Chemical mapping of a 207-nucleotide RNA with 2A3.
RNA sequence: GGGAACGACUCGAGUAGAGUCGAAAAGCAUUGGCUCAGCCUGUGGUUAAAGCUGCUCAGGAGGCUGAGGCGGGAGGAUCGCUUGAGCCCGGGAUGUUGAGGCUACAAUGAGCUGAGAUCACAUCACUCUGCCCCAGCCCAGUGAGCUGAGAUCACAACUGAAUGGGUGUUUCGACACCCAUUCAGUAAAAGAAACAACAACAACAAC
Reactivity to 2A3 in 0.01 (KOAc 150mM, MgCl2 10mM, bicine 150mM(pH8.5), 24C), signal-to-noise 1, nucleotides 027 to 156: g030c040a020u150u150g120g000c010u010c120a010g050c040c100u110g000u000g000g040u010u000a070a050a000g040c050u100g010c010u020c190a140g000g090a160g010g000c060u000g000a000g000g010c000g010g000g000a030g030g000a070u020c130g030c050u060u140g100a010g040c000c000c000g070g020g000a110u110g100u160u100g040a140g010g010c000u070a070c130a050a170u250g050a090g010c120u060g060a000g000a130u130c040a010c000a140u070c020a030c030u090c000u000g070c000c000c000c000a000g000c000c000c000a070g040u060g150a080g000c000u000g000a000g000a010u040c020a000c020a030
The reactions ran in a buffer of 150 mM KOAc, 10 mM MgCl2 and 150 mM bicine (pH 8.5), at 24 C.